RNA sequence: GGGAACGACUCGAGUAGAGUCGAAAAGGCUGUUGAAAUAAAUUCCUGUGCCGGCAAUACAGUGUGUAUGGAGGUCUCAAUGGCUCGGAAGUGCCAGCAAACCGGCGUAGAUAUUAGCAGACGUAUGAUAGGAUGCAUCCGUUCGCGGAUGCAUCAACAACUUUAAUGAGUUCGCUCAUUAAAGUUGAAAAGAAACAACAACAACAAC
Reactivity to 2A3 in 0.01 (KOAc 150mM, MgCl2 10mM, bicine 150mM(pH8.5), 24C), signal-to-noise 4, nucleotides 027 to 156: g050g000c020u030g030u050u020g060a030a100a080u120a030a080a090u170u060c000c010u010g030u040g000c000c010g010g010c020a000a070u060a070c050a060g150u050g030u020g010u230a040u040g020g050a010g030g030u010c020u010c090a080a180u070g010g010c020u040c040g050g030a120a030g010u040g050c010c000a010g000c090a080a040a050c010c000g000g020c010g000u020a020g030a070u070a060u170u120a040g030c020a010g020a100c040g090u160a050u190g100a080u090a100g130g000a000u000g000c010a000u000c010c010g020u020u070c170g000c000g120g010a000u010g000c010a000u000c000a000a000
Reactivity to DMS in 0.01 (KOAc 150mM, MgCl2 10mM, bicine 150mM(pH8.5), 24C), signal-to-noise 3, nucleotides 027 to 156: g020g030c020u000g020u000u020g000a110a120a160u000a040a110a190u010u000c060c010u000g030u010g010c030c010g020g030c020a070a140u000a060c030a120g020u010g020u000g030u000a060u000g020g010a140g000g030u000c040u000c100a090a150u010g020g030c000u000c030g000g010a190a180g000u000g010c010c000a080g000c040a040a160a030c020c010g000g010c020g030u000a050g010a120u000a060u000u000a060g000c010a110g010a080c070g020u000a080u010g010a160u010a110g000g010a030u000g020c010a030u020c000c010g030u000u010c300g030c000g020g030a030u000g000c000a010u000c010a030a090
Source information: Conditions: 150 mM KOAc, 10 mM MgCl2 and 150 mM bicine (pH 8.5), 24 C. Structure probing data (2A3 and DMS) for a 207-nucleotide construct. It was measured as part of the RMDB library M2RFPK. The 2A3 profile rests on 2,851 reads. DMS adducts were read by reverse transcription with MarathonRT.